[RMDB]
Structure probing data (2A3) for a 207-nucleotide construct.
The RNA was probed in 150 mM KOAc, 10 mM MgCl2 and 150 mM bicine (pH 8.5) at 24 C.

RNA sequence: GGGAACGACUCGAGUAGAGUCGAAAACUACUUCUACUGGGUCCUUUCCAAUUGCUACUGAAACUUCUUUAACCGCAUCAAAAGUUUCUUGUGAUGUAGCCAUUCCUCUUAUUAUUUCAAUAAGCUUCAUUACUGGAGCAGGAUUGAAAAAGUGCAAGGCCAUAUAUUACUUCGGUAAUAUAUGGCCAAAAGAAACAACAACAACAAC
Reactivity to 2A3 in 0.01 (KOAc 150mM, MgCl2 10mM, bicine 150mM(pH8.5), 24C), signal-to-noise 2, nucleotides 027 to 156: c010u010a010c010u160u070c000u000a010c000u010g000g000g020u020c000c000u020u010u000c000c000a000a000u020u030g000c030u000a000c010u020g010a010a040a000c010u030u050c040u030u290u120a160a120c080c070g090c160a100u110c060a180a090a070a040g010u010u030u040c000u070u090g150u000g070a070u200g010u000a000g020c010c000a020u060u020c030c060u150c030u090u200a150u190u080a130u020u110u000c000a000a000u040a060a010g000c000u020u020c000a110u010u300a160c180u050g020g000a030g000c000a020g000g120a020u050u050g020a020a000a020a020a020g030u270g080c050a090a070